[RMDB]
RNA sequence: GGGAACGACUCGAGUAGAGUCGAAAAGCAACAUAGAUCGUUCUAUUAACGAAGACGCGCGGAUCGUCGGUGGUCGGCGAGCCCACGGACGUACUUGAUCGCGCGAACGAGUAAAAAUCGCCGGCAAGCCUAAUUAUCCGUUCGCGGAUAAUUAGGCAAAAGAAACAACAACAACAAC
Reactivity to DMS in 0.01 (KOAc 150mM, MgCl2 10mM, bicine 150mM(pH8.5), 24C), signal-to-noise 2, nucleotides 027 to 126: g000c070a060a120c100a060u000a120g030a110u000c060g020u000u000c050u010a200u000u000a080a140c210g000a100a080g000a080c090g030c000g010c020g000g000a070u000c010g000u030c010g000g050u000g000g020u010c000g000g010c050g010a030g000c240c000c010a020c010g010g010a030c030g030u000a070c220u020u010g010a120u010c020g010c000g040c010g010a010a020c020g010a080g000u010a020a010a010a040a060u000c010g000c000c000g020g010c250a040a190
Reactivity to 2A3 in 0.01 (KOAc 150mM, MgCl2 10mM, bicine 150mM(pH8.5), 24C), signal-to-noise 2, nucleotides 027 to 126: g030c000a000a090c000a090u080a070g100a140u040c020g030u050u000c070u070a300u260u240a150a080c100g050a140a020g110a080c070g020c000g000c000g030g050a100u090c020g000u000c090g090g010u000g000g030u020c020g000g030c000g020a080g140c010c010c010a000c010g100g010a020c010g000u070a010c060u090u250g080a080u140c020g000c000g000c010g020a000a010c000g000a000g000u020a000a000a060a030a040u030c000g000c000c000g000g050c060a070a060
Structure probing data (DMS and 2A3) for a 177-nucleotide construct.
The 2A3 profile rests on 1,690 reads.